An RNA of 177 nucleotides, treated with 2A3 and DMS and read out base by base. For 2A3, 7,275 sequencing reads were counted.

RNA sequence: GGGAACGACUCGAGUAGAGUCGAAAAACAAGCUGCACGUGCGUGCGAGCAGUUUUCGAAAUCGCACGUUUCACGUAAAGACGCAUCUCUACUCGAGAAAGCGAGUCACGCAGACAGCGUCAAGGAACGUGCAUACACUAUUCGUAGUGUAUGCACGAAAAGAAACAACAACAACAAC
Reactivity to 2A3 in 0.01 (KOAc 150mM, MgCl2 10mM, bicine 150mM(pH8.5), 24C), signal-to-noise 5, nucleotides 027 to 126: a000c080a070a060g110c030u030g010c070a000c010g030u060g010c030g010u010g000c010g000a030g110c090a070g010u070u040u130u250c060g060a050a070a110u010c000g020c000a000c010g010u040u130u140c020a010c020g020u040a000a060a040g060a020c030g030c030a120u030c000u000c000u010a010c000u010c000g000a010g010a030a000a010g040c010g010a040g070u070c040a020c080g070c030a020g040a200c040a060g010c000g010u010c020a050a040g100g010a100a030
Reactivity to DMS in 0.01 (KOAc 150mM, MgCl2 10mM, bicine 150mM(pH8.5), 24C), signal-to-noise 4, nucleotides 027 to 126: a050c120a080a100g010c010u000g010c300a030c000g040u000g010c060g010u000g010c000g010a020g020c170a150g000u000u010u010u010c090g000a080a100a110u000c040g020c020a020c020g020u000u000u000c040a060c050g000u000a060a140a050g000a120c070g010c130a080u000c000u010c000u000a020c000u000c000g000a010g010a040a070a120g010c030g000a090g020u010c060a040c080g020c080a070g010a060c090a100g010c020g010u000c080a060a090g020g010a070a110
Background:
2A3 is a SHAPE reagent: it acylates the 2'-hydroxyl of flexible nucleotides of all four kinds. The RNA was probed in 150 mM KOAc, 10 mM MgCl2 and 150 mM bicine (pH 8.5) at 24 C. For DMS, 3,997 sequencing reads were counted. DMS adducts were read by reverse transcription with MarathonRT.